[RMDB]
RNA sequence: GGGAACGACUCGAGUAGAGUCGAAAAGGAAAGCGCGCGAAUUGGAAACCAGGGCGCCAUAUUACGCGCGCAAGGAAUUGGGCCUUGGUUUUUUGGAAGGAUUAGAUAAUUACCCGGCGCGCGUCAACGACACUAAUUAUUUCGAUAAUUAGUGUCGAAAAGAAACAACAACAACAAC
Reactivity to DMS in 0.01 (KOAc 150mM, MgCl2 10mM, bicine 150mM(pH8.5), 24C), signal-to-noise 7, nucleotides 027 to 126: g000g010a270a130a150g010c010g020c010g020c010g000a110a110u010u010g000g000a030a020a020c010c010a010g010g000g010c020g020c010c010a020u010a050u010u000a070c050g010c070g010c100g010c100a030a050g010g010a080a130u000u000g010g000g010c010c000u000u000g000g010u000u000u000u000u000u010g020g010a090a220g000g010a110u010u010a100g000a090u010a070a070u010u010a130c030c000c020g010g010c020g000c010g010c020g000u000c150a050a110
Reactivity to 2A3 in 0.01 (KOAc 150mM, MgCl2 10mM, bicine 150mM(pH8.5), 24C), signal-to-noise 3, nucleotides 027 to 126: g020g020a120a080a020g010c010g000c000g000c020g010a070a100u210u240g070g050a030a020a000c000c010a000g010g020g000c150g140c040c010a010u090a020u170u120a060c050g050c010g000c010g030c100a000a030g040g010a050a050u040u020g000g000g000c000c000u000u000g000g000u020u010u000u000u040u000g030g030a070a020g030g020a020u100u100a130g080a100u150a180a100u170u100a110c010c020c000g030g020c000g010c000g000c000g010u020c000a070a060